[RMDB]
RNA sequence: GGGAACGACUCGAGUAGAGUCGAAAACGUGGAACGCCAACAUCCACUACGACGCUCUGCUGGAUGCCAUGGUGCCGCUCGGUACCCAGUGCGUGCUCGACGUCGGGUGCGGCGACGGGUUGCUGGCGUGUGUUUAAGUGUUCGCACUUAAACACACAAAAGAAACAACAACAACAAC
Reactivity to 2A3 in 0.01 (KOAc 150mM, MgCl2 10mM, bicine 150mM(pH8.5), 24C), signal-to-noise 5, nucleotides 027 to 126: c060g050u050g060g040a110a060c010g050c070c020a080a100c010a110u010c000c010a000c010u060a040c050g140a040c040g020c050u050c030u090g030c020u020g020g010a030u040g000c010c040a070u110g050g010u070g060c030c010g050c050u080c080g010g010u030a030c000c000c000a040g010u080g090c040g020u060g040c020u000c030g150a160c040g070u080c000g030g010g020u080g020c020g030g000c010g030a050c050g040g020g020u040u040g020c000u000g000g000c030
Reactivity to DMS in 0.01 (KOAc 150mM, MgCl2 10mM, bicine 150mM(pH8.5), 24C), signal-to-noise 3, nucleotides 027 to 126: c120g000u000g000g010a070a100c060g030c050c070a040a120c090a070u000c010c020a050c040u010a220c130g000a150c060g000c030u010c070u000g050c010u000g000g000a080u010g020c010c070a090u030g050g000u010g020c020c000g010c110u030c100g000g000u030a000c010c000c020a100g040u010g000c160g030u010g020c020u010c000g020a150c120g000u010c000g010g000g010u000g000c050g010g040c030g000a070c010g000g000g000u010u000g020c020u000g000g010c170